[RMDB]
RNA sequence: GGGAACGACUCGAGUAGAGUCGAAAACACCAGCCCGAGGUUACGACACGAAUGGGCUGGUACGAAUGACGUAUAGCUCUUGCAGCAGCGUGUCGAAACGUACCCGAGCUAUACGCCUGGGGUGGUGGAGAAUGUUUAGUUUCGACUGGACAUUCUCAAAAGAAACAACAACAACAAC
Reactivity to 2A3 in 0.01 (KOAc 150mM, MgCl2 10mM, bicine 150mM(pH8.5), 24C), signal-to-noise 3, nucleotides 027 to 126: c020a000c000c000a000g050c010c000c000g050a050g050g000u040u090a040c060g020a010c080a000c050g130a150a000u260g000g000g000c000u000g000g000u000a000c000g090a080a190u180g010a010c000g010u010a000u000a010g000c000u000c000u000u100g020c010a030g000c010a000g010c010g000u000g010u020c010g020a040a020a000c010g010u010a020c000c000c000g000a000g000c000u000a000u000a030c010g000c000c010u010g000g000g000g020u030g010g020u040g050
Reactivity to DMS in 0.01 (KOAc 150mM, MgCl2 10mM, bicine 150mM(pH8.5), 24C), signal-to-noise 2, nucleotides 027 to 126: c130a050c000c000a000g000c010c000c010g010a160g020g000u020u020a090c100g000a090c120a070c000g000a300a000u090g000g000g000c000u000g000g000u000a000c300g000a300a300u010g010a060c000g000u000a000u000a020g000c000u000c010u020u020g000c000a070g010c070a110g000c010g000u000g000u010c030g000a040a030a030c030g010u010a040c040c020c030g000a030g010c010u000a010u000a000c000g010c010c020u020g000g000g010g000u000g000g020u010g000